RNA sequence: GGGAACGACUCGAGUAGAGUCGAAAACUUAGACGAGACAGAGACGUAUUUCUAUCGUGUCGCGGCGCGCAACGACGUGGAUGAUGGCGAGUUGUCGGCGGAAGUGUCGGCAAGUCCGUUGACGGAAGGCACCACAACGGCAACAACCGACACGCAACGACCUCCUUUUGUUCGCAAAAGGAGGUCGAAAAGAAACAACAACAACAAC
Reactivity to 2A3 in 0.01 (KOAc 150mM, MgCl2 10mM, bicine 150mM(pH8.5), 24C), signal-to-noise 1, nucleotides 027 to 156: c040u030u020a050g040a080c030g010a030g030a050c020a050g010a040g050a050c040g040u050a180u000u040u020c180u050a020u030c050g020u020g040u020c010g000c000g060g090c030g040c050g000c050a000a230c090g020a020c020g020u060g000g050a070u100g020a000u050g030g000c050g020a020g010u010u000g010u000c030g050g000c010g010g060a220a050g030u000g000u000c020g000g030c300a120a020g030u040c040c000g000u000u040g030a050c020g000g040a110a070g100g050c040a010c010c000a010c000a000a000c000g000g000c010a030a000c000a010a000c030c000g000a000c000a000c000g020c000a020a040